Conditions: 150 mM KOAc, 10 mM MgCl2 and 150 mM bicine (pH 8.5), 24 C. An RNA of 177 nucleotides, treated with DMS and read out base by base. Reactivities are rounded to 0.1 and cut off at 0 and 3.
[RMDB]
RNA sequence: GGGAACGACUCGAGUAGAGUCGAAAAGAUCGAGCCGUGAACCAGAUUCUGCUCAGCGUGAUUGCUGAGGGCGGGCCCGGUAACACCGGACCCGAUUUCGGGAAGGCUAGCCCGGUGGGGUUGCUGGUAACGAGAGGAUCUUCGGAUCCUCUCGUUAAAAAGAAACAACAACAACAAC
Reactivity to DMS in 0.01 (KOAc 150mM, MgCl2 10mM, bicine 150mM(pH8.5), 24C), signal-to-noise 1, nucleotides 027 to 126: g000a070u030c040g010a010g020c030c000g030u000g000a160a290c050c010a110g020a110u000u000c040u000g000c020u000c000a000g010c000g010u000g040a120u020u000g010c000u000g000a010g000g000g000c020g000g000g000c000c000c000g010g050u000a130a130c140a300c010c000g000g010a050c000c000c000g000a090u000u000u010c040g000g000g000a080a120g030g060c050u010a030g010c000c000c000g020g010u000g000g000g020g020u000u010g010c020u000g000g000